[RMDB]
RNA sequence: GGGAACGACUCGAGUAGAGUCGAAAACGGACACUGCACUACACCGCCAGUCGCCCUGCUGGGCCAGUUAAACGCUCACUUGUCCGGGAUUAACCCCAUGGGGUUAAAUGGGGGCAAUGCAGAGAUAACGUCGCGUGAUUUCUGUCAUUUAGAUUGACUAAAUUAGUGAGUUCGCUCACUAAUUUAGAAAAGAAACAACAACAACAAC
Reactivity to 2A3 in 0.01 (KOAc 150mM, MgCl2 10mM, bicine 150mM(pH8.5), 24C), signal-to-noise 3, nucleotides 027 to 156: c040g000g030a020c030a000c060u040g010c030a010c040u100a050c080a040c070c010g050c040c020a040g060u100c020g080c000c010c010u040g060c030u050g000g030g010c000c010a010g010u030u100a120a180a040c090g050c050u080c050a030c010u040u000g020u010c000c000g030g000g000a050u110u070a040a070c000c000c030c000a080u220g090g010g000g020u020u050a020a070a100u150g050g010g000g000g030c000a000a020u040g000c020a010g030a010g000a100u060a100a060c060g050u080c060g090c020g090u040g060a090u020u030u000c020u040g100u080c010a040u070u100u080a160g060a250u050u070g010a020
Reactivity to DMS in 0.01 (KOAc 150mM, MgCl2 10mM, bicine 150mM(pH8.5), 24C), signal-to-noise 2, nucleotides 027 to 156: c010g040g020a110c030a110c050u000g010c030a070c030u010a120c050a080c000c000g000c020c020a090g000u000c060g020c030c010c010u010g010c050u010g030g030g010c040c030a070g010u000u000a050a070a080c060g000c020u000c010a060c050u000u000g020u000c010c020g060g000g020a290u000u000a030a040c020c000c000c040a120u020g060g020g030g000u000u000a000a050a090u000g010g010g000g010g030c060a040a030u010g030c020a020g010a050g020a160u010a070a080c070g010u010c100g010c070g040u010g000a090u000u000u000c010u020g010u010c040a060u000u000u000a100g000a160u000u010g010a250
Structure probing data (2A3 and DMS) for a 207-nucleotide construct. For 2A3, 2,423 sequencing reads were counted. The RNA was probed in 150 mM KOAc, 10 mM MgCl2 and 150 mM bicine (pH 8.5) at 24 C.